[RMDB]
RNA sequence: GGGAACGACUCGAGUAGAGUCGAAAAUGGGCCGUGUGCUUAACCAGGACAAGAUCUCCUUCUCUCCAACGUUGUUGCCAAGUCAUGAUUCUCCUAACCUGUGCUUGGAGAGACGUGGACCCAGAGUAAAACGAAGGGUGCUUCGGCACCCUUCGAAUCACAACAAAUGGUUCGCCAUUUGUUGUGAAAAAGAAACAACAACAACAAC
Reactivity to DMS in 0.01 (KOAc 150mM, MgCl2 10mM, bicine 150mM(pH8.5), 24C), signal-to-noise 1, nucleotides 027 to 156: u000g010g000g020c000c020g030u000g010u030g000c050u020u020a050a180c070c040a130g000g040a240c050a110a060g020a130u000c040u020c030c000u000u000c020u000c010u010c010c010a090a120c060g020u000u000g010u000u000g020c040c070a010a120g000u020c020a100u000g030a110u000u010c090u000c050c010u000a050a030c010c000u000g040u020g010c040u020u000g020g020a090g020a050g030a030c050g020u000g000g000a080c070c000c000a290g010a160g000u010a060a080a020a210c070g020a040a000g000g060g070u000g000c000u000u020c260g070g020c020a000c000c010c010u010u000c020g020a010a060